[RMDB]
RNA sequence: GGGAACGACUCGAGUAGAGUCGAAAAGAUAUGGAAUUAGAUUCGCGAUAAGAUGCCAUCGGAAACGAUGGGCAUCUUUUGACGCGAGCCUAAUUCCUAAGUCAAAGUUAUCAGUUCGCUGAUAACAGGUAUAACGACUGUUCGCAGUCGUUAUACCAAAAGAAACAACAACAACAAC
Reactivity to 2A3 in 0.01 (KOAc 150mM, MgCl2 10mM, bicine 150mM(pH8.5), 24C), signal-to-noise 1, nucleotides 027 to 126: g000a010u050a020u120g000g010a000a010u010u000a000g040a010u010u020c000g000c060g170a060u090a300a010g000a000u010g000c010c000a000u010c000g010g010a050a010a000c010g000a010u050g080g000g000c010a000u000c000u000u010u010u020g090a090c160g000c010g020a000g000c020c000u000a010a000u000u000c000c000u000a020a000g010u000c020a110a140a120g000u030u000a000u000c000a010g060u050u110c290g090c190u000g010a010u000a010a010c020a000
Reactivity to DMS in 0.01 (KOAc 150mM, MgCl2 10mM, bicine 150mM(pH8.5), 24C), signal-to-noise 2, nucleotides 027 to 126: g020a030u000a300u000g020g010a020a010u000u010a010g000a050u000u000c000g030c000g000a230u000a020a020g000a010u000g030c000c000a040u000c010g020g000a050a090a160c000g020a000u010g010g030g030c010a000u000c000u000u000u000u000g020a170c150g000c000g000a020g030c040c010u000a000a010u000u000c000c000u020a020a090g000u010c000a130a060a150g000u000u000a000u000c000a020g000u020u010c290g020c000u010g000a010u000a010a020c010a070
The record gives the reactivity of an RNA of 177 nucleotides to 2A3 and DMS. Source: RMDB library TTRDES, as collected in RNAgym. DMS adducts were read by reverse transcription with MarathonRT. The DMS profile rests on 1,703 reads. The reactions ran in a buffer of 150 mM KOAc, 10 mM MgCl2 and 150 mM bicine (pH 8.5), at 24 C.